Structure probing data (2A3 and DMS) for a 177-nucleotide construct. The data come from the RNA Mapping Database (RMDB), library OK1LIB.
RNA sequence: GGGAACGACUCGAGUAGAGUCGAAAAGGGACGAUGAGAACGCAAUCUCUCACCCAAGUUAUGAGAGUUCGGAAGGAUAGUGGUCUAGUAUAUAAGUGCUCGUCCUCCUCGUAAACAGGGCUGCGGCCAUCCGUGUCCUUUUCGAAGGACACGGAUGAAAAGAAACAACAACAACAAC
Reactivity to 2A3 in 0.01 (KOAc 150mM, MgCl2 10mM, bicine 150mM(pH8.5), 24C), signal-to-noise 6, nucleotides 027 to 126: g030g000g020a020c070g030a060u100g010a020g020a140a020c030g010c080a070a140u050c000u000c000u000c030a050c010c010c020a030a030g100u150u110a130u100g060a020g000a030g040u090u090c070g020g060a090a010g070g010a080u090a090g150u090g040g030u000c030u010a020g110u010a090u020a010u030a140a140g060u080g030c010u010c010g010u040c010c000u010c000c010u030c030g060u140a000a140a020c070a090g030g010g000c030u020g000c020g030g000c010
Reactivity to DMS in 0.01 (KOAc 150mM, MgCl2 10mM, bicine 150mM(pH8.5), 24C), signal-to-noise 4, nucleotides 027 to 126: g000g000g010a040c100g010a060u040g000a090g010a070a060c090g000c170a140a030u040c030u000c010u000c010a100c080c020c080a110a110g000u020u020a060u010g010a050g000a080g000u000u010c050g010g010a070a050g000g000a080u000a060g010u030g000g000u000c020u000a110g020u030a090u010a080u040a080a090g020u030g010c040u000c010g010u000c010c020u010c020c010u000c060g020u020a080a060a070c140a100g010g000g020c040u010g020c010g020g000c100
For DMS, 8,531 sequencing reads were counted. The RNA was probed in 150 mM KOAc, 10 mM MgCl2 and 150 mM bicine (pH 8.5) at 24 C.